[RMDB]
RNA sequence: GGGAACGACUCGAGUAGAGUCGAAAACGAAUCGUCAUAAUGUAAAGCUCUUUUCUCGAUCAUUGAGAACCAAUAUUUUAUGAAAGCAUAGAGGUUGAGAGAAGUUAGAUUUCGACGUCGCUAUGCACCUACGUAGCUAUUUCGAUAGCUACGUAGGAAAAGAAACAACAACAACAAC
Reactivity to DMS in 0.01 (KOAc 150mM, MgCl2 10mM, bicine 150mM(pH8.5), 24C), signal-to-noise 3, nucleotides 027 to 126: c120g000a070a060u070c070g000u030c020a130u000a030a000u000g000u010a020a040a180g000c070u030c000u000u020u000u010c000u010c010g020a090u030c120a060u010u020g050a080g010a050a240c170c040a020a150u000a060u020u010u000u010a080u020g020a090a100a070g010c030a000u010a010g010a070g010g030u000u000g000a100g020a020g000a040a050g000u020u010a050g000a050u030u000u020c030g000a110c090g000u030c030g000c030u000a010u000g050c010a240
Reactivity to 2A3 in 0.01 (KOAc 150mM, MgCl2 10mM, bicine 150mM(pH8.5), 24C), signal-to-noise 9, nucleotides 027 to 126: c030g050a020a070u130c040g040u020c050a050u060a150a040u160g140u220a090a110a150g070c030u030c010u060u040u050u010c010u010c010g080a110u050c040a120u080u180g030a050g030a110a050c020c010a060a040u100a190u120u140u100u070a100u110g080a110a070a000g010c000a010u010a010g030a020g010g010u040u040g020a040g020a000g010a060a000g060u090u170a070g030a180u040u040u030c070g010a020c010g020u020c010g000c050u030a020u040g010c010a030